RNA sequence: GGGAACGACUCGAGUAGAGUCGAAAAUCGCCCGAGCAGCUUUUUCCCGAAGUAGCUCGAUGGUGCGGUGCUGACAAAUCGGGAACCGCUACAGGAUGCUUCCUGCCUGUGGUCAGAUCGAACGGAAGAUAAGGAUCGUGCAUUGGGUCGUUUCAGCCCUCUAAUCGAUGUUCGCAUCGAUUAGAGGAAAAGAAACAACAACAACAAC
Reactivity to 2A3 in 0.01 (KOAc 150mM, MgCl2 10mM, bicine 150mM(pH8.5), 24C), signal-to-noise 2, nucleotides 027 to 156: u050c000g010c030c000c000g000a000g030c020a010g040c020u020u090u050u030u050c000c000c020g000a010a010g000u050a040g010c010u000c010g020a160u180g020g030u080g040c070g020g040u100g120c040u060g000a120c050a100a130a000u050c000g020g000g030a010a000c030c000g000c000u020a000c000a000g010g020a030u070g040c000u040u000c040c020u040g000c000c000u000g000u010g000g020u050c080a070g010a140u260c080g090a040a060c130g040g000a010a020g000a030u170a070a040g100g000a020u140c050g030u090g100c030a110u050u110g000g040g000u050c040g000u000u000u040c090a120g030c000

Conditions: 150 mM KOAc, 10 mM MgCl2 and 150 mM bicine (pH 8.5), 24 C.
This 207-nucleotide RNA was probed chemically with 2A3.
2A3 adducts were read by reverse transcription with SuperScript II with manganese.
Reactivities are given for positions 27 through 156.
For 2A3, 1,042 sequencing reads were counted.